Chemical mapping of a 207-nucleotide RNA with 2A3 and DMS. DMS adducts were read by reverse transcription with MarathonRT. The DMS profile rests on 2,853 reads.
RNA sequence: GGGAACGACUCGAGUAGAGUCGAAAAAAUACAGGCUCUCCCAUCCAACUCCUAUUCCAACACGUCCUCGUCGUACAGAGUGGUAACAUGUGUCACCACAUAUCCAAGCUUGGGUUCACGGGCUUGAAAAAGUUAGAGCGCUUCGGCGCUCUAACAACUGUACAAUAUUCUUCGGAAUAUUGUACAGAAAAGAAACAACAACAACAAC
Reactivity to 2A3 in 0.01 (KOAc 150mM, MgCl2 10mM, bicine 150mM(pH8.5), 24C), signal-to-noise 3, nucleotides 027 to 156: a010a010u240a050c050a060g040g000c000u020c010u000c020c000c000a030u030c030c020a040a060c010u020c020c000u060a090u120u010c030c010a030a040c020a030c080g020u020c010c010u020c030g070u020c010g020u060a050c050a060g130a040g080u030g020g000u040a080a020c050a130u160g100u080g060u190c020a020c040c020a010c010a050u110a040u080c030c010a020a000g000c020u040u050g050g020g050u090u010c040a040c060g010g010g000c000u030u010g060a060a060a030a010a000g000u000u000a010g000a000g000c000g000c000u020u040c120g050g000c000g000c000u010c000u000a000a000c000a000a000
Reactivity to DMS in 0.01 (KOAc 150mM, MgCl2 10mM, bicine 150mM(pH8.5), 24C), signal-to-noise 1, nucleotides 027 to 156: a090a030u020a120c060a150g010g000c020u000c040u010c000c000c030a200u000c060c010a130a060c030u000c000c010u000a100u000u000c050c000a030a050c060a110c040g020u000c020c030u000c070g010u000c030g040u000a110c070a120g010a120g020u010g040g020u000a030a050c030a160u000g050u000g000u000c020a060c040c000a010c010a100u000a100u010c060c010a030a020g020c000u000u000g010g010g040u000u000c060a080c060g020g010g030c030u010u000g020a040a000a070a050a120g020u000u010a020g020a000g000c000g090c010u000u010c300g030g040c000g050c010u000c010u010a000a010c000a020a080